[RMDB]
RNA sequence: GGGAACGACUCGAGUAGAGUCGAAAAGAACGGCAGAGAGCCGAGAAAUGAGACGAGGUAGAGGGCGCGCUCUACCAAAAGCUGUGUGUAAAAACGCACGUGUAGGCGCGGCUACACAACUCAAGAACACCAGUAGGCACUUCGGUGCCUACUGGUGAAAAGAAACAACAACAACAAC
Reactivity to 2A3 in 0.01 (KOAc 150mM, MgCl2 10mM, bicine 150mM(pH8.5), 24C), signal-to-noise 1, nucleotides 027 to 126: g010a020a000c000g000g000c080a020g090a030g020a050g290c000c000g000a010g000a080a130a080u240g000a010g100a030c010g000a000g000g010u000a000g030a020g020g080g020c000g000c000g010c010u180c000u040a010c020c000a000a000a000a000g140c230u100g000u000g000u000g000u040a000a000a030a000a120c000g070c000a000c010g090u060g000u030a010g000g000c000g000c050g090g000c000u120a000c070a000c080a000a180c000u000c050a010a070g090a090a000
Reactivity to DMS in 0.01 (KOAc 150mM, MgCl2 10mM, bicine 150mM(pH8.5), 24C), signal-to-noise 1, nucleotides 027 to 126: g050a170a120c000g000g000c030a300g070a050g000a290g040c000c000g000a000g010a130a210a050u000g000a000g000a060c300g000a150g050g050u000a000g000a030g000g000g010c130g010c000g000c030u090c000u000a000c000c200a110a040a030a300g000c240u000g000u000g000u060g000u000a000a050a000a130a080c000g000c000a000c140g000u070g010u000a010g000g000c000g000c000g000g000c100u010a000c050a120c000a040a080c070u010c010a040a070g000a300a060